RNA sequence: GGGAACGACUCGAGUAGAGUCGAAAAGGCUUUUUGCCUCAUGAUGUUCGGGUGGUUUGUUAUCGUGUUGUGAGGCAAAAAGCAGAAAGCCCCGAAGUUAAUUCUCAUUAACCACGAGGCUUGAUCUGCUUUUACCAUCGUUCGCGAUGGUAAAAGCAAAAGAAACAACAACAACAAC
Reactivity to 2A3 in 0.01 (KOAc 150mM, MgCl2 10mM, bicine 150mM(pH8.5), 24C), signal-to-noise 1, nucleotides 027 to 126: g050g000c000u000u000u020u000u000g010c000c000u000c000a000u000g070a010u000g000u180u130c070g150g020g030u030g060g220u300u120u140g270u160u240a180u080c000g000u000g000u100u000g000u000g000a000g000g000c000a000a010a000a000a000g000c000a000g020a000a040a000g000c020c040c000c000g040a000a000g000u000u050a000a000u200u030c250u000c300a020u020u010a010a020c030c040a040c060g000a000g010g060c000u060u000g080a050u010c090u020